[RMDB]
RNA sequence: GGGAACGACUCGAGUAGAGUCGAAAAUUAAACGCAACGACUCGAGUAGAGUCGAAAACAAAACGACUCGAGUAGAGUCGAAAACCCAACGACUCGAGUACAGUCGAAGCGAACGCAAGCGAAAAAACAACUAUAGAGUGUUCGCACUCUAUAGUUGAAAAGAAACAACAACAACAAC
Reactivity to 2A3 in 0.01 (KOAc 150mM, MgCl2 10mM, bicine 150mM(pH8.5), 24C), signal-to-noise 3, nucleotides 027 to 126: u030u000a040a050a000c300g000c300a010a000c000g000a000c010u000c010g010a010g050u080a010g030a000g000u000c000g010a010a000a000a000c130a130a130a000a000c000g000a000c000u000c000g000a000g030u040a010g020a000g000u000c000g000a000a000a000a000c060c070c060a010a010c010g020a000c000u020c030g040a030g080u120a070c090a010g010u000c000g010a060a020g030c020g020a080a020c090g010c110a040a050g060c030g120a090a030a000a010a000a020
Reactivity to DMS in 0.01 (KOAc 150mM, MgCl2 10mM, bicine 150mM(pH8.5), 24C), signal-to-noise 3, nucleotides 027 to 126: u010u010a040a100a240c110g010c090a040a180c000g000a010c000u000c000g020a090g000u000a080g000a020g010u000c000g000a030a030a040a060c000a000a000a050a030c000g010a000c000u000c000g000a070g000u000a050g000a000g010u000c000g000a000a030a070a020c010c010c010a130a200c010g000a010c000u000c010g000a170g000u010a060c270a030g000u000c000g010a110a240g010c020g000a070a070c150g010c130a080a090g000c100g000a000a050a050a050a050a110
Background
The record gives the reactivity of an RNA of 177 nucleotides to 2A3 and DMS. For DMS, 6,768 sequencing reads were counted. For DMS the reverse transcriptase was MarathonRT.